[RMDB]
RNA sequence: GGGAACGACUCGAGUAGAGUCGAAAAGCACGUGCAUCGUCAACACCUCAUGGGUCAUCGACAGAGGUUUCAUUGAUGUCUGUGAAAACAAAGUCAUCAGAAUCUUGUUGAAGCAGGAACCCAAGUACAUGAAGGUCACCUACAAUCUCACUGGAAAGCUUGUGUAAAUAUUCGUAUUUACACAAGCAAAAGAAACAACAACAACAAC
Reactivity to 2A3 in 0.01 (KOAc 150mM, MgCl2 10mM, bicine 150mM(pH8.5), 24C), signal-to-noise 7, nucleotides 027 to 156: g070c050a010c080g050u100g030c050a060u080c030g080u060c030a030a040c020a050c060c010u060c050a110u100g050g000g040u050c010a060u060c090g040a020c020a040g130a030g070g000u040u060u070c110a110u070u110g010a010u020g040u040c030u030g070u050g100a070a090a000a000c070a040a160a010g020u020c000a020u010c010a030g020a070a020u020c020u020u050g020u020u050g030a040a010g040c060a040g020g100a070a050c010c010c010a030a010g040u060a050c040a060u050g050a040a020g030g010u050c010a030c060c010u060a040c030a020a090u050c030u030c090a060c060u100g090g060a040a180a090
Reactivity to DMS in 0.01 (KOAc 150mM, MgCl2 10mM, bicine 150mM(pH8.5), 24C), signal-to-noise 3, nucleotides 027 to 156: g020c030a070c080g020u000g040c060a080u010c040g020u020c040a090a100c030a110c050c020u000c060a200u010g020g010g030u000c000a160u000c040g010a050c040a100g030a080g020g010u000u000u030c040a160u000u000g020a030u000g020u000c010u010g020u000g010a130a140a100a150c070a070a040a060g020u010c040a040u000c040a080g010a050a050u000c030u000u000g020u000u000g020a080a140g020c050a130g030g020a100a070c010c000c010a030a110g030u000a010c090a100u000g000a050a090g000g030u000c020a070c020c020u000a030c060a110a120u010c010u000c020a110c030u000g020g010a060a100a250